The record gives the reactivity of an RNA of 177 nucleotides to DMS. Conditions: 150 mM KOAc, 10 mM MgCl2 and 150 mM bicine (pH 8.5), 24 C.

[RMDB]
RNA sequence: GGGAACGACUCGAGUAGAGUCGAAAAAAUUUAGAUUAUCCAGGUGUAGCGGUGAAAUUCGUAGAGAUCUGGUGGAUAAUGAACCGGUGGCGAAGGCGAAAGAUAACCGCUGAAUUGCUGAAGUGAAGAGAAGGGAAGGAUUCGUCCUUCCCUUCUCAAAAGAAACAACAACAACAAC
Reactivity to DMS in 0.01 (KOAc 150mM, MgCl2 10mM, bicine 150mM(pH8.5), 24C), signal-to-noise 2, nucleotides 027 to 126: a080a110u000u000u000a060g020a140u020u000a100u000c040c020a030g050g020u000g020u000a020g020c020g030g010u000g000a080a140a060u000u000c020g040u000a110g000a210g000a200u000c000u020g020g010u010g030g000a150u000a060a090u020g000a150a010c020c010g030g010u000g010g020c300g030a150a200g010g010c030g000a030a060a050g030a050u000a170a080c000c070g010c000u000g010a050a070u010u000g010c040u000g000a060a150g000u000g000a060a160